Chemical mapping of a 207-nucleotide RNA with DMS and 2A3. Reactivities are given for positions 27 through 156. The reactions ran in a buffer of 150 mM KOAc, 10 mM MgCl2 and 150 mM bicine (pH 8.5), at 24 C. Reactivities are rounded to 0.1 and cut off at 0 and 3.

RNA sequence: GGGAACGACUCGAGUAGAGUCGAAAACUAAAUUAUCUCAACAAAACCUAGAGGUUUGUGGGUGUAUGUGGCAAAAUGGUUCAAAGAUCAAGAAGGCAGUAUUUUGACAGUUGUAUUUUGAGGUUCUUAUUUGCAGAAAGGGCAUAAAUGGAGUAUACCAUUUAGGACUAUUCGUAGUCCUAAAUGGAAAAGAAACAACAACAACAAC
Reactivity to DMS in 0.01 (KOAc 150mM, MgCl2 10mM, bicine 150mM(pH8.5), 24C), signal-to-noise 1, nucleotides 027 to 156: c080u000a030a090a150u000u010a110u010c030u000c010a060a160c040a150a060a060a090c030c000u010a140g010a110g020g040u000u000u000g040u010g020g000g010u020g010u000a050u000g000u000g010g030c030a030a040a080a060u000g010g030u000u000c010a090a050a090g010a110u000c010a050a130g010a080a160g000g020c070a070g020u000a040u000u000u000u000g000a100c020a090g000u000u000g020u010a100u000u000u000u010g000a070g000g020u000u010c030u000u000a120u000u010u000g020c020a030g020a020a020a060g020g010g050c030a040u000a010a040a050u000g010g000a050g000u010a090u000a210
Reactivity to 2A3 in 0.01 (KOAc 150mM, MgCl2 10mM, bicine 150mM(pH8.5), 24C), signal-to-noise 2, nucleotides 027 to 156: c070u050a070a090a060u160u140a090u050c100u020c050a060a170c020a030a150a030a050c020c040u130a100g020a070g200g010u090u070u140g020u030g030g020g010u010g020u020a040u100g040u040g000g000c060a020a020a000a130u090g040g000u020u000c030a100a180a040g020a070u060c010a030a030g030a030a040g050g000c020a000g040u060a120u030u100u040u030g030a030c020a040g000u070u040g050u170a190u080u170u090u100g060a010g000g000u000u000c000u000u090a190u100u100u080g000c000a000g000a000a000a000g040g050g030c000a000u000a010a010a000u000g020g000a000g010u020a000u050a060